RNA sequence: GGGAACGACUCGAGUAGAGUCGAAAACGGUUGGGAUUGCGUUCUGUAAUGGACGCAUGAACCAGGAAUUCCUAGUAGUCGCGUGUCACUAACGGGCGACGACUGCGUCCCUGUUCUUUGUACACACGUUCUUUAUGUAGUUCGCUACAUAAAGAACAAAAGAAACAACAACAACAAC
Reactivity to 2A3 in 0.01 (KOAc 150mM, MgCl2 10mM, bicine 150mM(pH8.5), 24C), signal-to-noise 8, nucleotides 027 to 126: c040g060g010u100u060g080g020g020a040u010u020g000c000g010u010u010c010u020g180u100a090a170u300g000g000a000c000g000c000a000u000g020a020a050c010c000a010g030g090a040a080u060u040c000c000u010a050g070u040a020g030u050c060g020c100g110u050g060u100c040a040c150u110a120a030c050g020g010g030c070g020a030c000g010a020c060u150g010c030g010u020c000c000c000u010g050u060u000c060u030u090u090g120u170a050c090a000c020a010c120
Reactivity to DMS in 0.01 (KOAc 150mM, MgCl2 10mM, bicine 150mM(pH8.5), 24C), signal-to-noise 9, nucleotides 027 to 126: c110g010g030u000u000g010g000g000a130u000u000g010c000g020u000u000c000u000g010u010a130a080u010g010g010a000c000g010c000a000u000g000a230a120c020c010a110g000g010a100a200u000u000c010c000u000a070g020u000a050g010u000c070g010c050g010u000g020u000c060a070c100u010a070a050c110g000g010g010c110g010a030c000g000a090c130u000g010c050g010u000c010c010c010u010g000u000u000c050u000u000u000g020u010a050c120a060c140a090c160